[RMDB]
RNA sequence: GGGAACGACUCGAGUAGAGUCGAAAACGAUAGCUGUUCGCAGCUAUCGAAAGGACUACCCGUCAGGGUUAAGGCCAUACGGACAGCCGGGUCCAAUGGCGAAAAGAGGGUUGUUCGCAACCCUCAAUCUUUACUCUUGCUUCGGCAAGAGUAAAGAAAAAGAAACAACAACAACAAC
Reactivity to DMS in 0.01 (KOAc 150mM, MgCl2 10mM, bicine 150mM(pH8.5), 24C), signal-to-noise 2, nucleotides 027 to 126: c010g010a020u000a000g020c000u000g010u000u020c300g020c000a000g020c000u000a000u000c000g000a000a080a080g020g000a110c070u000a030c000c000c000g000u020c210a130g020g000g010u000u000a060a030g010g010c000c000a040u000a090c120g040g000a000c040a190g000c070c100g000g010g010u000c000c000a090a040u000g000g000c010g000a040a100a110a140g010a000g000g000g010u000u000g020u000u000c220g010c020a030a000c000c000c010u000c000a020a030
Reactivity to 2A3 in 0.01 (KOAc 150mM, MgCl2 10mM, bicine 150mM(pH8.5), 24C), signal-to-noise 1, nucleotides 027 to 126: c030g000a000u000a000g030c010u000g050u090u100c300g040c140a010g000c000u000a000u000c000g000a030a010a000g110g050a060c020u040a010c050c000c000g050u130c230a120g000g000g060u050u110a080a090g180g000c000c010a000u070a070c150g030g010a010c020a060g180c110c040g120g010g050u010c020c000a030a040u040g010g030c020g050a020a030a010a040g010a000g040g000g000u020u010g000u020u050c200g010c110a000a010c020c000c000u000c010a010a010